The data come from the RNA Mapping Database (RMDB), library M2RFPK. Structure probing data (2A3) for a 207-nucleotide construct. Reactivities are given for positions 27 through 156. The reactions ran in a buffer of 150 mM KOAc, 10 mM MgCl2 and 150 mM bicine (pH 8.5), at 24 C.
RNA sequence: GGGAACGACUCGAGUAGAGUCGAAAAUACCUUGAGUAUUGCUGAAUUCAGUUUAGCGUGCAUGCUCUUGGCUAUUCUCAUAUUGAUUGUCAAAUUUGGAGUUACUUAUUCGUCAAUUCAAUAUUUAAAAAGGUGCCGAUGUUCGCAUCGGCACCAAGGAAGUCAGUACGUUCGCGUACUGACUUCCAAAAGAAACAACAACAACAAC
Reactivity to 2A3 in 0.01 (KOAc 150mM, MgCl2 10mM, bicine 150mM(pH8.5), 24C), signal-to-noise 1, nucleotides 027 to 156: u090a000c000c000u020u030g000a000g000u030a030u120u130g060c050u010g080a170a100u200u150c180a160g180u110u140u160a100g080c120g000u060g010c010a000u000g000c000u010c010u000u010g000g000c010u040a070u000u000c000u000c000a000u000a000u010u000g010a000u000u000g080u030c040a010a000a010u030u010u020g050g000a210g070u170u040a170c000u000u000a000u010u010c000g000u000c000a020a000u120u040c050a030a020u070a070u040u210u300a260a210a130a080a040g000g000u000g020c000c000g020a010u010g030u020u080c230g000c110a000u000c000g010g010c000a000c000c000a000a000